[RMDB]
RNA sequence: GGGAACGACUCGAGUAGAGUCGAAAAUUCAGCCAAUUUAGUAGCGGCCCUGAAAACCAACAGCAAAGUUGUCCCUAAGUUAAGGUUUAGCAAUAAGUGUGUCCCCCAGGUAAUAGGGUUAAAGCAGUCUCUUGGAAGAUUUCGAUCUUCCAAGAGAAAAAGAAACAACAACAACAAC
Reactivity to DMS in 0.01 (KOAc 150mM, MgCl2 10mM, bicine 150mM(pH8.5), 24C), signal-to-noise 2, nucleotides 027 to 126: u010u000c070a120g060c010c060a070a130u010u010u000a120g000u000a120g000c070g010g010c030c030c060u000g000a050a060a120a110c020c040a070a080c110a060g010c050a070a070a080g000u000u000g030u000c040c000c010u000a060a090g010u020u000a070a110g030g010u010u000u010a060g040c080a030a040u000a070a070g020u000g010u020g010u000c010c020c010c040c010a040g000g000u010a050a150u010a020g020g000g000u010u000a040a070a110g020c070a140g000